[RMDB]
RNA sequence: GGGAACGACUCGAGUAGAGUCGAAAACUACAUUAGUAUGUCACUUGUAUUAGUCAUUGUAGUGAAGAGAUUGUACAACCCAUCACUUUCUAACUUUGCGUUAGCAUUGUGCAGUGGUGUAAUGUGGCAUAGUUAGGCACUUCGGUGCCUAACUAUGAAAAGAAACAACAACAACAAC
Reactivity to DMS in 0.01 (KOAc 150mM, MgCl2 10mM, bicine 150mM(pH8.5), 24C), signal-to-noise 3, nucleotides 027 to 126: c020u000a010c030a050u000u000a060g010u010a060u010g010u000c030a050c030u000u000g010u010a020u000u000a030g020u010c080a150u010u000g010u010a090g020u010g000a060a060g000a110g000a040u000u000g000u000a010c040a040a070c050c030c000a100u010c010a030c010u000u010u000c040u000a050a030c010u000u010u000g000c130g000u000u010a030g000c100a010u000u000g010u000g020c260a030g010u000g010g000u000g000u000a030a020u000g010u000g010g030
Reactivity to 2A3 in 0.01 (KOAc 150mM, MgCl2 10mM, bicine 150mM(pH8.5), 24C), signal-to-noise 3, nucleotides 027 to 126: c000u020a020c000a040u020u040a010g090u070a080u150g040u020c010a010c050u040u060g030u060a050u110u180a090g020u010c040a070u020u110g120u100a110g070u050g120a110a020g080a010g010a040u050u080g000u020a020c020a020a020c020c000c000a020u040c010a010c020u010u070u010c020u010a020a040c010u040u070u230g030c070g060u050u040a020g020c050a070u010u010g000u020g000c040a020g020u020g080g000u030g010u100a040a060u030g020u030g020g000
Source: RMDB library 15KREP, as collected in RNAgym.
The record gives the reactivity of an RNA of 177 nucleotides to DMS and 2A3.
The DMS profile rests on 4,081 reads.
For 2A3 the reverse transcriptase was SuperScript II with manganese.
The RNA was probed in 150 mM KOAc, 10 mM MgCl2 and 150 mM bicine (pH 8.5) at 24 C.
Values cover nucleotides 27 to 126.